[RMDB]
RNA sequence: GGGAACGACUCGAGUAGAGUCGAAAAGAAGGAAAGGGAGAGCGAGGGCCCACGGAGCAGGCAGCAUAAGUGCAUGUGGGCCUGCCGUCGCCCGCCACCCUCGGCCGUGGGGGGGUUGGUUGCCCCCAACCCCGUGGGGGUUCGCCCCCACGGGGUUAAAAGAAACAACAACAACAAC
Reactivity to 2A3 in 0.01 (KOAc 150mM, MgCl2 10mM, bicine 150mM(pH8.5), 24C), signal-to-noise 1, nucleotides 027 to 126: g100a200a060g040g040a090a070a010g090g000g000a120g000a050g060c020g020a180g000g000g000c000c040c020a000c000g060g030a110g070c000a000g010g020c000a050g000c000a070u120a290a090g100u090g180c040a040u130g010u030g000g260g020c000c020u000g020c010c000g000u040c130g000c000c000c040g000c000c000a070c010c010c000u000c000g160g000c000c010g000u150g000g000g000g000g000g000g000u010u040g030g010u010u130g040c010c000c000c010c010
Reactivity to DMS in 0.01 (KOAc 150mM, MgCl2 10mM, bicine 150mM(pH8.5), 24C), signal-to-noise 2, nucleotides 027 to 126: g020a090a120g000g000a100a070a180g010g000g000a050g000a040g020c030g000a300g000g000g030c010c000c020a030c030g000g000a210g020c010a020g000g000c090a180g020c050a020u050a100a080g010u020g000c030a110u040g000u030g030g010g000c010c010u000g040c060c010g000u000c150g000c030c000c100g000c040c060a130c000c020c020u000c080g010g000c000c020g000u000g000g000g000g000g000g010g000u000u000g020g020u000u000g000c000c000c000c000c040